[RMDB]
RNA sequence: GGGAACGACUCGAGUAGAGUCGAAAAGUUACACAUGCGUUGUAAAAGGAUGUAAUGCAGUAUUUGCUCGUCGUGUAUAUCUCAUGAGACAUCGAAAAAAUGCACAUCCCGAGCUCUUCACACCAAACCUCGUCAUAUUAUUCGUAAUAUGACGAGGAAAAGAAACAACAACAACAAC
Reactivity to 2A3 in 0.01 (KOAc 150mM, MgCl2 10mM, bicine 150mM(pH8.5), 24C), signal-to-noise 3, nucleotides 027 to 126: g000u020u030a020c040a010c020a070u180g150c060g110u140u060g070u130a030a050a030a060g090g020a060u030g010u050a170a020u110g020c010a010g050u090a060u050u070u050g020c030u040c040g110u020c030g020u040g060u030a040u020a050u170c070u030c060a050u120g010a020g040a110c070a080u050c050g090a070a080a040a040a000a040u040g000c010a010c010a040u000c010c010c020g020a020g020c010u010c030u040u140c060a070c020a030c020c040a050a030a140
Reactivity to DMS in 0.01 (KOAc 150mM, MgCl2 10mM, bicine 150mM(pH8.5), 24C), signal-to-noise 5, nucleotides 027 to 126: g000u010u000a040c050a040c050a120u010g010c120g020u030u000g000u010a040a050a130a130g020g000a070u010g000u000a060a090u010g010c050a070g000u000a080u000u000u000g020c070u000c080g010u000c110g030u000g000u000a070u010a090u000c080u000c080a060u010g000a110g020a070c080a050u000c080g000a000a020a050a070a160a040u000g000c040a070c030a070u000c040c060c020g000a080g000c060u000c030u000u000c060a090c110a150c070c090a040a100a160